[RMDB]
Overview: Source: RMDB library OK3TST, as collected in RNAgym. Chemical mapping of a 207-nucleotide RNA with DMS and 2A3. For 2A3 the reverse transcriptase was SuperScript II with manganese. For DMS the reverse transcriptase was MarathonRT. High 2A3 reactivity points to a flexible backbone, as in loops and unpaired stretches. The RNA was probed in 150 mM KOAc, 10 mM MgCl2 and 150 mM bicine (pH 8.5) at 24 C.
RNA sequence: GGGAACGACUCGAGUAGAGUCGAAAAUAGAACUGCCUAGUACACUAUAGGUAGAGUCAGUUAGGAGACUCUGUGCCUAAGAGAAGCCUAUUCUCCUGUACUAGGCAGUAUAGGGCCAGGAAUAGGCUUUCCUAACUGAGGUGUACUGUAAUGAUGGGAGUAAAUGGUAUUUCGAUACCAUUUACUCAAAAGAAACAACAACAACAAC
Reactivity to DMS in 0.01 (KOAc 150mM, MgCl2 10mM, bicine 150mM(pH8.5), 24C), signal-to-noise 4, nucleotides 027 to 156: u010a140g010a110a150c030u000g010c000c000u000a030g010u000a040c030a170c110u000a140u000a050g010g020u000a070g020a140g020u000c020a040g030u000u000a060g020g000a120g010a080c000u000c060u000g030u010g030c070c070u010a100a100g010a100g020a110a050g010c030c020u010a030u000u010c010u010c020c040u010g040u000a030c000u000a120g020g000c060a010g010u000a000u000a050g010g010g020c050c080a110g010g000a040a120u000a040g010g000c020u000u010u000c000c000u000a040a050c040u010g000a080g020g010u000g020u000a050c040u010g030u000a100a130u000g010a170u010g020g010
Reactivity to 2A3 in 0.01 (KOAc 150mM, MgCl2 10mM, bicine 150mM(pH8.5), 24C), signal-to-noise 4, nucleotides 027 to 156: u190a010g110a050a030c030u010g000c010c000u000a000g000u020a010c020a010c050u150a080u100a230g030g060u050a050g030a020g110u010c010a000g000u010u010a010g000g040a060g030a070c000u010c010u050g040u120g070c030c030u080a050a010g020a010g010a040a000g000c000c000u000a030u010u000c080u060c010c010u020g000u000a000c000u010a010g020g000c010a010g000u000a010u010a000g010g010g040c060c050a030g010g060a020a000u010a000g000g000c000u020u040u000c000c000u000a020a000c010u020g020a010g020g030u070g020u020a060c040u020g050u110a070a100u120g150a060u120g100g120